RNA sequence: GGGAACGACUCGAGUAGAGUCGAAAAGAUAUGGACUAGCGACAUGAAGUCGGACACUAUUCGGAAACGAACGAAUGUCUCCCUUCAACAGCGCUAGUCCUAAGUCAAAGGGAUGUUCGCAUCCCAAGCUGGAACCAUGGUUCGCCAUGGUUCCAGCAAAAGAAACAACAACAACAAC
Reactivity to DMS in 0.01 (KOAc 150mM, MgCl2 10mM, bicine 150mM(pH8.5), 24C), signal-to-noise 1, nucleotides 027 to 126: g000a010u020a300u000g000g000a020c000u000a060g000c000g030a070c220a150u070g020a010a010g010u010c210g020g000a000c000a030c120u000a250u000u000c010g000g040a050a060a150c110g040a020a050c110g000a100a050u000g010u000c040u000c000c060c000u000u000c000a020a060c300a140g000c000g060c000u000a090g000u000c000c000u000a000a070g050u000c040a130a040a090g020g000g000a010u000g000u010u000c180g000c020a000u000c000c000c040a000a000
Reactivity to 2A3 in 0.01 (KOAc 150mM, MgCl2 10mM, bicine 150mM(pH8.5), 24C), signal-to-noise 1, nucleotides 027 to 126: g030a040u020a080u110g050g000a000c010u020a000g020c000g210a250c000a110u060g000a050a000g080u180c220g000g040a070c050a030c050u270a080u020u060c020g090g020a160a260a170c120g110a080a010c010g060a140a100u020g030u000c110u070c000c000c030u010u020c060a160a250c070a100g110c020g000c020u010a000g000u060c000c000u000a000a010g010u000c070a080a070a030g020g000g000a000u010g040u120u180c180g070c070a000u000c000c000c000a000a040